[RMDB]
RNA sequence: GGGAACGACUCGAGUAGAGUCGAAAAUCAUCGUUCUUCGGAACGAUGAAGUAUAACGCGGGCUCCGGACACAGGCGUUGCUGGCCUGGGAUAGUCACAGUAUGGGGCAAACUUUCGAGUUUGCCAAGAGAUAGUACUUCUUCGGAAGUACUAUCUCAAAAGAAACAACAACAACAAC
Reactivity to 2A3 in 0.01 (KOAc 150mM, MgCl2 10mM, bicine 150mM(pH8.5), 24C), signal-to-noise 4, nucleotides 027 to 126: u020c000a010u000c000g000u000u020c000u030u040c210g100g000a000a000c000g000a000u000g000a010a000g000u040a090u050a190a050c070g010c050g080g040g000c020u040c040c030g010g060a030c070a000c000a110g050g020c030g090u090u090g080c080u100g040g000c000c000u010g000g000g030a120u130a080g030u040c030a000c020a100g090u090a110u220g190g020g000g000c000a000a000a000c030u090u110u120c240g050a020g010u000u010u010g000c000c000a020a010
Reactivity to DMS in 0.01 (KOAc 150mM, MgCl2 10mM, bicine 150mM(pH8.5), 24C), signal-to-noise 7, nucleotides 027 to 126: u000c000a000u000c000g010u000u000c000u000u010c210g040g000a010a000c000g000a000u010g000a010a070g000u010a090u010a080a090c110g010c060g010g000g020c030u000c040c030g010g010a080c090a150c060a050g000g010c030g010u000u000g010c110u010g000g010c020c020u000g000g010g000a080u010a060g010u010c050a080c100a090g010u000a090u010g020g010g010g010c000a000a010a010c010u000u000u010c170g010a020g010u000u000u000g000c000c000a040a060

The record gives the reactivity of an RNA of 177 nucleotides to 2A3 and DMS. The reactions ran in a buffer of 150 mM KOAc, 10 mM MgCl2 and 150 mM bicine (pH 8.5), at 24 C. For DMS, 13,611 sequencing reads were counted. For 2A3, 7,305 sequencing reads were counted. Source: RMDB library M2PK50, as collected in RNAgym.